This 207-nucleotide RNA was probed chemically with 2A3. Values cover nucleotides 27 to 156. The data come from the RNA Mapping Database (RMDB), library OK3TST. Conditions: 150 mM KOAc, 10 mM MgCl2 and 150 mM bicine (pH 8.5), 24 C.
[RMDB]
RNA sequence: GGGAACGACUCGAGUAGAGUCGAAAAGCAUGUUUAUGUGAACCUAAGAAUGAAUGUCAGUGACUGUAGAUUAGAAGCACUGAUUAUAGCAUUGGCUGCUUGGUGUUCACUUUAUUUGCAUCUGUGAGUUUCCAACAAGCCCUAAGUUUACUGACAACCCACGACUACUAUUCGUAGUAGUCGUGGGAAAAGAAACAACAACAACAAC
Reactivity to 2A3 in 0.01 (KOAc 150mM, MgCl2 10mM, bicine 150mM(pH8.5), 24C), signal-to-noise 3, nucleotides 027 to 156: g000c010a010u070g030u020u140u060a220u180g000u010g010a010a000c000c010u000a020a030g030a080a140u300g080a100a050u140g010u010c000a020g000u010g120a300c010u020g010u090a090g030a300u070u060a010g030a150a020g080c080a050c090u000g000a020u020u060a010u020a020g040c020a030u000u100g040g030c040u020g020c000u050u000g000g000u140g000u050u000c000a020c000u030u060u020a090u020u060u040g000c000a030u040c070u030g030u040g050a060g050u060u070u050c040c000a020a020c040a120a000g050c010c010c010u060a100a000g020u030u040u110a130c040u050g040a020c020a010a070